[RMDB]
RNA sequence: GGGAACGACUCGAGUAGAGUCGAAAAAGAAAUGGUCGGGGGCGCAGCUCAUGGAUGAUAUGUUGAUGACAGUCACGGGGGGGCAGGCUUCGACCUCUGCAGGACAGAAAGGGUCGACGGAAGUUCAGGUAUACUACUCUUUCGAGAGUAGUAUACCAAAAGAAACAACAACAACAAC
Reactivity to DMS in 0.01 (KOAc 150mM, MgCl2 10mM, bicine 150mM(pH8.5), 24C), signal-to-noise 4, nucleotides 027 to 126: a100g000a070a090a080u010g010g020u000c030g020g010g010g030g020c070g020c100a090g010c030u010c060a050u010g020g020a130u000g000a040u000a070u000g020u000u000g000a130u000g000a070c080a050g010u000c030a050c090g020g000g010g000g000g000g020c050a050g020g000c080u000u000c020g010a030c010c020u000c020u000g010c090a100g010g010a180c090a060g010a060a060a120g010g000g010u000c030g010a050c160g000g000a060a090g000u010u000c100a060
Reactivity to 2A3 in 0.01 (KOAc 150mM, MgCl2 10mM, bicine 150mM(pH8.5), 24C), signal-to-noise 2, nucleotides 027 to 126: a010g050a000a030a030u110g030g000u030c010g030g020g030g010g010c020g020c050a020g020c020u020c040a060u090g060g040a050u040g010a030u110a070u280g070u030u080g150a150u160g030a020c010a010g030u030c020a000c100g040g000g030g020g000g000g030c020a010g040g000c000u020u000c000g020a020c000c000u040c010u010g010c010a040g000g090a080c010a020g080a070a020a010g060g000g010u000c010g010a010c020g060g030a050a010g010u050u100c040a010